Structure probing data (2A3 and DMS) for a 177-nucleotide construct.
It was measured as part of the RMDB library TTRDES.
Reactivities are given for positions 27 through 126.
The 2A3 profile rests on 26,346 reads.
RNA sequence: GGGAACGACUCGAGUAGAGUCGAAAAGAUAUGGAAUGGUCAGCUGGCAACAGCGUAUGGAUCGGAAACGAUCCUACGACAUGCCAGUUCAUUCCUAAGUCAAAAGACGAUCGUUCGCGAUCGUCAACAGUGUCUUAUUCUUCGGAAUAAGACACUGAAAAGAAACAACAACAACAAC
Reactivity to 2A3 in 0.01 (KOAc 150mM, MgCl2 10mM, bicine 150mM(pH8.5), 24C), signal-to-noise 1, nucleotides 027 to 126: g020a000u040a020u090g000g010a010a010u010g030g130u300c230a050g020c050u010g050g000c120a300a070c090a300g040c010g010u020a070u300g010g010a000u000c000g020g000a020a020a010c000g000a000u000c000c000u000a000c000g070a050c080a100u300g000c000c000a000g000u000u040c000a000u000u000c000c000u010a100a010g030u000c030a100a000a070a140g010a000c010g010a010u010c020g030u090u080c300g000c020g130a010u000c000g000u010c000a000a010
Reactivity to DMS in 0.01 (KOAc 150mM, MgCl2 10mM, bicine 150mM(pH8.5), 24C), signal-to-noise 7, nucleotides 027 to 126: g000a030u000a210u010g000g000a010a000u000g000g010u030c300a180g010c010u000g000g010c000a100a070c230a180g000c010g000u000a010u020g030g010a020u000c000g020g000a040a040a090c010g000a000u000c000c000u000a000c000g000a040c090a300u000g010c000c000a010g000u000u010c010a010u000u000c000c000u000a030a120g010u000c020a110a080a130a120g010a010c010g010a010u000c000g030u000u010c290g030c000g010a010u000c000g000u010c000a040a120